[RMDB]
Source: RMDB library OK2TRN, as collected in RNAgym. The record gives the reactivity of an RNA of 177 nucleotides to 2A3 and DMS. Reactivities are given for positions 27 through 126. 2A3 adducts were read by reverse transcription with SuperScript II with manganese.
RNA sequence: GGGAACGACUCGAGUAGAGUCGAAAACAUCAAGCCAGUACCAGUAGUCAACUUCUCUUUUGAGCAUAUUUAAAGGUGGUCCGACUAAAUGUACCAUAUAAAUAUCAGAACAGUUCUCCUCACCUGGCAUGUGUCGAAAAUUCGUUUUCGACACAUGAAAAGAAACAACAACAACAAC
Reactivity to 2A3 in 0.01 (KOAc 150mM, MgCl2 10mM, bicine 150mM(pH8.5), 24C), signal-to-noise 4, nucleotides 027 to 126: c010a040u130c050a030a030g050c020c020a010g010u020a030c020c000a030g030u060a000g040u060c020a040a030c040u070u040c090u010c000u050u100u070u150g070a060g050c060a050u060a100u150u120u100a100a110a010g120g000u010g010g030u050c030c050g060a070c070u150a080a110a070u080g010u020a020c020c000a000u060a010u050a190a090a010u110a040u080c030a010g050a060a020c010a020g010u030u010c030u020c010c010u020c010a050c000c000u000g000g000
Reactivity to DMS in 0.01 (KOAc 150mM, MgCl2 10mM, bicine 150mM(pH8.5), 24C), signal-to-noise 5, nucleotides 027 to 126: c070a070u000c090a080a140g010c030c020a040g000u000a070c060c050a080g010u010a050g010u000c050a110a060c040u000u000c040u000c040u000u000u000u010g010a080g000c120a080u010a030u000u000u000a040a070a130g010g030u000g000g000u000c050c060g000a100c140u010a020a090a080u000g010u000a030c020c030a040u000a090u000a040a030a050u010a040u000c060a070g010a050a080c090a070g010u000u000c020u000c020c040u000c080a090c080c040u000g010g010